This 177-nucleotide RNA was probed chemically with 2A3 and DMS. High DMS reactivity at an A or C suggests that its Watson-Crick edge is free. Source: RMDB libraries RFM100 and RFMREP, as collected in RNAgym. For DMS the reverse transcriptase was MarathonRT.
RNA sequence: GGGAACGACUCGAGUAGAGUCGAAAAGCAGACAAUCCAGUCUCAUUACAAGGCAAACGUGAUGGGGCUGUUUUCUGCGCUUAACCCCGUCUUCCAAUAAUUGGAAAAAUGCAGUGCAUUGCACUUGGGAUAGAAUUCUGUUCGCAGAAUUCUAUCCAAAAGAAACAACAACAACAAC
Reactivity to 2A3 in 0.01 (KOAc 150mM, MgCl2 10mM, bicine 150mM(pH8.5), 24C), signal-to-noise 8, nucleotides 027 to 126: g000c010a000g010a020c060a040a030u050c040c010a020g000u010c000u000c000a000u000u010a010c030a090a240g280g050c080a190a160a020c110g000u000g000a000u000g000g000g000g000c000u000g000u010u000u000u000c000u000g000c010g010c020u080u140a120a120c010c000c010c000g050u020c060u030u000c010c010a050a140u160a300a240u270u080g000g050a030a020a010a000a020u180g020c060a010g030u000g030c060a230u070u280g000c010a010c020u030u090g090
Reactivity to DMS in 0.01 (KOAc 150mM, MgCl2 10mM, bicine 150mM(pH8.5), 24C), signal-to-noise 6, nucleotides 027 to 126: g010c000a020g010a050c280a060a010u020c130c020a010g020u000c010u000c000a010u000u000a010c000a130a090g010g020c300a070a060a130c210g000u000g010a000u000g000g010g010g010c010u000g000u000u000u000u000c000u010g000c000g000c150u010u010a110a130c100c000c010c060g000u040c080u000u000c000c000a040a170u030a170a140u040u030g000g010a000a030a060a080a060u020g000c110a040g010u010g020c020a180u020u040g000c020a040c000u010u020g020